RNA sequence: GGGAACGACUCGAGUAGAGUCGAAAACUACUCAAGAUCCCAACUUUGAGUAUUCUGGGACCAUCCCCUACCUAGAUGGCACCUUCUACUUAUCUCACACCUUUCAGCGGUGUUCUAUCCAGUGGGACUCUAGCGUGCCUUGGCCUGGCAACGACAGGUGGUCCACAUUUUUCGAAAUGUGGACCACAAAAGAAACAACAACAACAAC
Reactivity to 2A3 in 0.01 (KOAc 150mM, MgCl2 10mM, bicine 150mM(pH8.5), 24C), signal-to-noise 2, nucleotides 027 to 156: c000u000a000c000u000c010a000a010g080a120u160c070c000c040a020a090c130u090u060u100g060a010g000u080a060u080u100c190u160g030g000g070a080c060c000a070u050c010c010c000c010u150a160c000c040u060a030g000a070u030g030g000c060a110c010c000u100u140c020u200a100c030u110u200a110u090c030u010c010a020c000a060c000c000u050u300u280c230a000g130c070g070g000u020g020u130u000c010u020a020u050c030c010a010g090u040g000g000g000a010c010u030c030u170a040g100c000g060u050g030c000c060u000u000g000g020c000c000u010g020g000c070a080a040c010g100a050c050a010g130
Chemical mapping of a 207-nucleotide RNA with 2A3. The data come from the RNA Mapping Database (RMDB), library OK3TST. Conditions: 150 mM KOAc, 10 mM MgCl2 and 150 mM bicine (pH 8.5), 24 C. The 2A3 profile rests on 545 reads.